[RMDB]
The record gives the reactivity of an RNA of 177 nucleotides to 2A3 and DMS.
2A3 is a SHAPE reagent: it acylates the 2'-hydroxyl of flexible nucleotides of all four kinds.
The RNA was probed in 150 mM KOAc, 10 mM MgCl2 and 150 mM bicine (pH 8.5) at 24 C.
For DMS, 1,986 sequencing reads were counted.

RNA sequence: GGGAACGACUCGAGUAGAGUCGAAAAUGCGCCGUUAUCUUCUCCGGCUUGCGUGCAUGCUGCCUUCCGCAAAGCUGCAGCGCGGCGCUCUGGAGGCCUUGCCCCGCGCACUGCUCUUUACAUGGCCCAGUCAUAUUCACUUCGGUGAAUAUGACUGAAAAGAAACAACAACAACAAC
Reactivity to 2A3 in 0.01 (KOAc 150mM, MgCl2 10mM, bicine 150mM(pH8.5), 24C), signal-to-noise 1, nucleotides 027 to 126: u050g000c000g000c000c010g050u070u090a090u130c090u180u010c020u040c040c030g060g000c020u020u090g010c000g000u030g030c030a030u140g030c030u050g000c010c030u010u090c060c020g030c090a000a100a090g010c030u070g000c030a000g040c000g040c000g010g000c010g000c000u000c020u040g000g000a000g000g000c000c000u000u060g060c010c010c000c010g020c000g000c000a000c040u100g020c010u040c040u090u130u080a030c030a130u130g040g000c000c000
Reactivity to DMS in 0.01 (KOAc 150mM, MgCl2 10mM, bicine 150mM(pH8.5), 24C), signal-to-noise 2, nucleotides 027 to 126: u010g000c050g010c020c050g000u000u020a070u000c090u010u000c030u000c100c080g000g030c060u010u000g010c040g030u000g020c050a050u000g020c050u000g010c020c070u000u000c080c080g040c080a050a040a070g000c100u000g010c070a040g020c150g010c040g000g020c070g020c030u000c060u000g010g000a080g010g010c030c050u000u000g010c040c040c050c070g000c080g040c040a090c070u000g000c010u000c030u010u010u000a070c160a050u000g000g010c040c060
DMS adducts were read by reverse transcription with MarathonRT.